[RMDB]
RNA sequence: GGGAACGACUCGAGUAGAGUCGAAAAUACCCGCAUCGAGCUAGCAAGAGCAUGUUGGAAGCUAGCAACCUUCAUGCCGAUGCAAUCCCAGGCUAUUGCCAACGACUCUACUCGAGUCGACAUAGAAACCUGUAUCAUAGUUCGCUAUGAUACAGGUAAAAGAAACAACAACAACAAC
Reactivity to 2A3 in 0.01 (KOAc 150mM, MgCl2 10mM, bicine 150mM(pH8.5), 24C), signal-to-noise 2, nucleotides 027 to 126: u040a010c010c010c050g020c020a080u140c090g100a050g060c040u090a010g000c040a080a020g010a000g000c000a020u020g020u010u010g020g040a080a030g010c070u070a070g060c050a010a010c010c000u040u000c000a000u010g010c000c000g020a020u020g030c010a020a100u070c020c020c000a020g020g000c030u100a110u140u230g000c000c020a040a010c010g000a010c000u010c000u000a000c000u000c000g000a000g000u000c000g000a000c000a030u150a030g100a030a120
Reactivity to DMS in 0.01 (KOAc 150mM, MgCl2 10mM, bicine 150mM(pH8.5), 24C), signal-to-noise 1, nucleotides 027 to 126: u000a060c030c030c100g020c080a000u000c060g010a030g010c050u010a280g020c040a040a040g010a180g010c030a010u000g030u000u000g020g010a030a250g030c020u010a050g020c040a010a110c000c010u000u010c020a010u000g020c010c010g010a230u000g000c010a010a080u000c010c010c010a110g000g000c050u000a030u030u000g000c000c030a050a230c000g010a020c000u010c000u000a010c000u000c000g000a000g000u000c000g000a000c050a120u000a090g000a080a100